[RMDB]
Structure probing data (2A3) for a 207-nucleotide construct. As a SHAPE reagent, 2A3 marks flexible, mostly unpaired nucleotides at the ribose 2'-OH. The RNA was probed in 150 mM KOAc, 10 mM MgCl2 and 150 mM bicine (pH 8.5) at 24 C.
RNA sequence: GGGAACGACUCGAGUAGAGUCGAAAAACUCGGGGAUGUCCGAAUGGGGAAACCCACCUCGUAAGAGGUAUCCGCAAGGAUGGGAACUCAGGGAACUGAAACAUCUCAGUACCUGAAGGAGAAGAAAGAGAAUUCGAUUCCGUUAGUAGCGGCGAGCCACGUCUCUGUAGUUCGCUACAGAGACGUGAAAAGAAACAACAACAACAAC
Reactivity to 2A3 in 0.01 (KOAc 150mM, MgCl2 10mM, bicine 150mM(pH8.5), 24C), signal-to-noise 1, nucleotides 027 to 156: a000c010u030c020g000g000g000g000a130u070g100u040c070c000g020a090a170u220g010g010g030g000a040a020a010c000c000c010a020c010c010u000c010g020u100a090a010g000a010g020g000u040a050u000c010c000g000c060a010a050g060g010a020u020g020g000g020a020a010c000u000c000a020g020g000g050a110a090c000u010g030a050a180a070c070a170u220c070u010c080a020g000u000a010c000c000u000g000a020a040g040g030a050g070a060a010g060a050a030a050g080a010g030a050a050u070u060c020g060a120u140u000c010c010g010u020u050a020g050u060a010g070c000g050g000c000g010a000g010c020